Structure probing data (2A3 and DMS) for a 177-nucleotide construct. The data come from the RNA Mapping Database (RMDB), library OK2TRN. 2A3 adducts were read by reverse transcription with SuperScript II with manganese. In probing experiments dimethyl sulfate is read out at A N1 and C N3, which are open when not base-paired.
RNA sequence: GGGAACGACUCGAGUAGAGUCGAAAAGGUCGCCAGGCCCGGCGACAGCAACAAGAGGCCCAUGUAGUCGAAGUUUUCCGACGCUGCCGGGCGAUCUCUUGGGAACACGAUCGCCGCCAAGACGAGCUAAAAGUGAAGUAUUCGUACUUCACUUUUAAAAAGAAACAACAACAACAAC
Reactivity to 2A3 in 0.01 (KOAc 150mM, MgCl2 10mM, bicine 150mM(pH8.5), 24C), signal-to-noise 5, nucleotides 027 to 126: g020g010u030c020g020c090c030a040g020g030c030c030c000g000g010c000g000a010c010a010g050c030a000a080c010a000a020g020a020g040g020c000c020c020a050u130g040u050a150g010u040c020g040a120a050g030u070u070u280u120c090c020g000a020c030g010c020u030g030c060c060g020g010g000c010g050a150u030c010u000c000u030u010g020g020g070a070a040c070a010c130g030a070u030c010g000c010c000g010c010c000a020a010g100a050c070g060a020g050c030
Reactivity to DMS in 0.01 (KOAc 150mM, MgCl2 10mM, bicine 150mM(pH8.5), 24C), signal-to-noise 9, nucleotides 027 to 126: g010g010u000c010g010c050c070a160g010g020c050c100c050g020g020c010g010a020c030a080g010c110a120a120c020a030a030g010a050g010g000c000c010c010a090u000g020u000a050g010u000c010g000a120a090g000u000u010u010u010c050c010g010a280c280g000c020u000g020c080c300g000g000g010c010g000a070u010c010u000c010u000u000g010g000g010a060a110c110a080c170g000a120u000c010g010c010c010g000c030c030a100a110g010a050c070g000a070g010c100